[RMDB]
RNA sequence: GGGAACGACUCGAGUAGAGUCGAAAAGGAUCUGAGUACUUAUAAGUGCGAAGUGAGUGAGGGUCUUACGAGCACGAAUUACACCCCUCUAUUAAGUAUCGAAGAUCGGCCGGAGAUCGAGAUACGACUAUUACCCGGCGACUGUACGAAGAUCCGAGAUAUAGUGACUCUUCGGAGUCACUAUAUCAAAAGAAACAACAACAACAAC
Reactivity to DMS in 0.01 (KOAc 150mM, MgCl2 10mM, bicine 150mM(pH8.5), 24C), signal-to-noise 3, nucleotides 027 to 156: g040g020a070u000c010u000g020a300g020u020a010c020u000u000a100u000a090a180g000u000g020c040g000a130a200g010u010g030a080g010u000g010a170g020g020g000u020c020u000u000a090c010g000a300g000c000a070c020g030a130a050u000u010a110c080a150c030c000c020c000u000c040u050a120u000u000a020a280g020u000a030u000c010g000a130a260g010a010u000c000g020g030c100c090g010g030a290g020a040u000c030g010a300g030a090u000a030c030g000a090c110u010a090u000u000a070c030c000c000g010g000c010g030a170c130u000g010u010a040c020g020a220a060g000a090u000c020c000g010a120
Reactivity to 2A3 in 0.01 (KOAc 150mM, MgCl2 10mM, bicine 150mM(pH8.5), 24C), signal-to-noise 3, nucleotides 027 to 156: g000g000a010u000c000u000g010a000g010u000a000c040u130u180a130u120a300a090g000u010g030c020g050a070a020g030u010g020a010g010u070g010a000g000g010g030u170c010u030u000a010c010g010a010g040c000a010c010g040a060a060u180u130a080c060a170c080c000c040c000u010c000u050a180u160u170a240a040g010u000a030u040c010g020a050a030g000a020u030c040g020g000c000c000g020g000a100g000a010u000c010g010a010g000a060u000a010c010g020a000c010u120a140u220u160a160c050c000c000g000g040c010g080a030c080u120g000u010a000c000g000a010a000g010a000u000c000c010g000a000